[RMDB]
RNA sequence: GGGAACGACUCGAGUAGAGUCGAAAAGAUAUGGAGUAUAGUCUACCACUGAAGCUCGAUAAGAUGCAUUCGGAAACGAAUGGCAUCUUUUGACGAGCCUGCAGUGGUAGACUAUACUCCUAAGUCAUCUCUUAAUUAGGUUCGCCUAAUUAAGAGAAAAAGAAACAACAACAACAAC
Reactivity to DMS in 0.01 (KOAc 150mM, MgCl2 10mM, bicine 150mM(pH8.5), 24C), signal-to-noise 5, nucleotides 027 to 126: g000a040u000a300u000g010g010a020g010u000a000u000a000g010u000c000u000a010c000c000a010c000u000g020a300a200g010c010u000c010g020a150u000a010a010g010a010u000g010c000a060u000u000c010g000g000a140a110a230c010g010a010a010u000g030g020c000a010u000c000u010u000u000u000g010a210c130g000a010g030c040c050u010g020c010a010g020u010g000g020u000a000g000a000c000u000a000u000a000c000u000c000c000u000a000a050g010u000c040a150

Chemical mapping of a 177-nucleotide RNA with DMS. For DMS the reverse transcriptase was MarathonRT. DMS (dimethyl sulfate) methylates the pairing face of unpaired adenines and cytosines. It was measured as part of the RMDB library TTRINS. Reactivities are given for positions 27 through 126. The reactions ran in a buffer of 150 mM KOAc, 10 mM MgCl2 and 150 mM bicine (pH 8.5), at 24 C.